[RMDB]
Source information
Structure probing data (DMS and 2A3) for a 177-nucleotide construct. 2A3 adducts were read by reverse transcription with SuperScript II with manganese. DMS adducts were read by reverse transcription with MarathonRT. Conditions: 150 mM KOAc, 10 mM MgCl2 and 150 mM bicine (pH 8.5), 24 C.
RNA sequence: GGGAACGACUCGAGUAGAGUCGAAAACGGUUCGUUCAGGAUGCGCUCGAACGGGGUGCGGUCGCGGUGGUACACGAGCGGGAGCUUCCGUCCUACCGGGAAGGGGUGGUGUACCUGAGGGUGAAGAACCCUUGUAGGAGUUCGCUCCUACAAGGGUAAAAGAAACAACAACAACAAC
Reactivity to DMS in 0.01 (KOAc 150mM, MgCl2 10mM, bicine 150mM(pH8.5), 24C), signal-to-noise 2, nucleotides 027 to 126: c080g000g030u000u000c050g020u010u000c060a090g030g000a100u000g020c110g010c030u000c080g010a070a060c110g020g000g010g000u000g020c040g020g010u000c090g000c060g000g030u000g000g010u000a020c100a100c120g010a100g030c070g000g000g000a140g010c020u000u010c070c000g000u000c040c030u000a100c120c050g000g000g000a070a100g000g010g000g040u000g000g010u010g020u000a020c060c030u010g000a110g010g020g000u010g000a110a100g010a090
Reactivity to 2A3 in 0.01 (KOAc 150mM, MgCl2 10mM, bicine 150mM(pH8.5), 24C), signal-to-noise 1, nucleotides 027 to 126: c050g000g020u030u080c020g020u070u070c040a050g000g060a150u110g050c100g000c040u060c030g030a060a020c030g050g010g010g050u090g050c080g010g060u050c040g010c000g030g080u020g020g020u040a030c020a000c070g030a020g030c060g030g000g000a070g050c010u150u040c020c000g050u100c000c010u050a120c020c040g020g020g020a060a020g040g000g000g010u110g020g020u070g000u020a000c010c000u000g020a080g000g040g010u100g010a040a030g100a090